The record gives the reactivity of an RNA of 177 nucleotides to 2A3 and DMS. For 2A3, 1,167 sequencing reads were counted. High 2A3 reactivity points to a flexible backbone, as in loops and unpaired stretches. Reactivities are given for positions 27 through 126. Source: RMDB library OK2TRN, as collected in RNAgym. High DMS reactivity at an A or C suggests that its Watson-Crick edge is free. For 2A3 the reverse transcriptase was SuperScript II with manganese.

[RMDB]
RNA sequence: GGGAACGACUCGAGUAGAGUCGAAAAAGGUGAUAUCGGAUCUAUUGGCACAGGGAGCCGAGUUAAAUGCCACAAUGGAUAAAACGGGCGAGACAUCAUUGCAUUUGGCAGCACGUUUUGCUCGAGCAUCGUGCACCCUAUUCGUAGGGUGCACGAUAAAAGAAACAACAACAACAAC
Reactivity to 2A3 in 0.01 (KOAc 150mM, MgCl2 10mM, bicine 150mM(pH8.5), 24C), signal-to-noise 1, nucleotides 027 to 126: a000g080g020u100g020a050u030a050u150c070g010g020a010u020c000u100a080u180u130g070g010c030a010c000a080g070g000g010a030g030c060c020g020a000g000u060u090a110a130a050u090g000c010c010a020c020a100a080u120g040g000a050u090a140a060a000a020c020g000g000g000c020g000a030g000a010c010a020u070c000a020u120u120g000c000a050u160u050u160g150g030c020a040g050c000a010c120g000u060u000u010u010g010c000u000c020g040a010g000c050
Reactivity to DMS in 0.01 (KOAc 150mM, MgCl2 10mM, bicine 150mM(pH8.5), 24C), signal-to-noise 1, nucleotides 027 to 126: a050g000g030u010g020a110u000a020u000c060g000g000a040u010c010u010a100u030u020g000g000c010a090c060a100g000g000g030a090g020c020c030g000a100g040u020u000a020a070a180u000g000c020c040a090c150a020a030u000g000g000a080u010a080a030a050a160c040g020g000g020c060g000a050g030a000c050a130u000c120a150u010u000g010c050a220u000u000u050g020g030c020a020g010c160a050c070g000u000u000u000u000g010c000u030c000g000a140g000c100